[RMDB]
RNA sequence: GGGAACGACUCGAGUAGAGUCGAAAAAAAUGGGAUCCCAGUUCACUGACAUCAGAACCACCUGGAGGGCUGGUUUAUAAUGCAGAUUUCCUGGCCCCUGCGUGCUUGGGAAUCCAAGAAUUCUGCAAACAAGGGAAACAUUCGUGUUUCCCUUGUUAAAAGAAACAACAACAACAAC
Reactivity to 2A3 in 0.01 (KOAc 150mM, MgCl2 10mM, bicine 150mM(pH8.5), 24C), signal-to-noise 1, nucleotides 027 to 126: a000a020a030u110g010g030g020a060u030c030c030c010a040g020u150u120c120a120c130u080g090a110c020a080u190c050a090g030a110a080c010c030a030c060c030u150g160g090a190g000g040g060c040u040g050g010u000u070u050a120u050a120a110u100g000c000a000g020a050u050u020u010c020c020u000g030g020c000c000c000c010u000g040c010g140u060g030c040u030u010g000g000g000a080a000u060c000c010a010a000g010a000a000u020u000c000u000g000c000a060
Reactivity to DMS in 0.01 (KOAc 150mM, MgCl2 10mM, bicine 150mM(pH8.5), 24C), signal-to-noise 3, nucleotides 027 to 126: a050a060a090u020g000g010g010a090u020c020c010c010a180g010u000u000c090a080c130u010g000a110c150a070u000c090a090g000a090a090c050c040a060c040c040u020g020g010a110g000g000g020c240u000g000g000u000u000u000a020u010a060a130u000g000c010a010g020a040u000u000u000c020c030u010g010g000c300c010c010c030u010g020c150g000u000g000c120u000u010g000g010g010a060a090u010c010c010a010a030g000a010a030u000u000c000u000g020c050a090